RNA sequence: GGGAACGACUCGAGUAGAGUCGAAAAGAAAGCCAAUCAGGCGGCGGGAGGGGGCUUCCUGCUGCGGAAUAAUCAGCUUCAGGGUAUCCACCACGGAGGCCACCUUCCCGGAGGAGAACGGCGCACGACAAUGCCGCAUAUUCGUAUGCGGCAUUGUAAAAGAAACAACAACAACAAC
Reactivity to DMS in 0.01 (KOAc 150mM, MgCl2 10mM, bicine 150mM(pH8.5), 24C), signal-to-noise 2, nucleotides 027 to 126: g000a090a120a160g000c000c030a070a280u000c060a030g020g020c060g020g000c090g030g020g010a010g010g000g000g020g000c050u000u000c000c000u000g000c150u010g010c070g000g040a110a070u000a060a140u000c060a070g000c100u010u010c260a160g000g000g030u000a050u000c020c010a040c000c050a130c300g000g000a020g000g000c000c000a070c010c000u000u000c000c000c010g000g000a060g000g020a190g000a020a050c300g020g010c020g010c160a120c170g000
Chemical mapping of a 177-nucleotide RNA with DMS. The RNA was probed in 150 mM KOAc, 10 mM MgCl2 and 150 mM bicine (pH 8.5) at 24 C.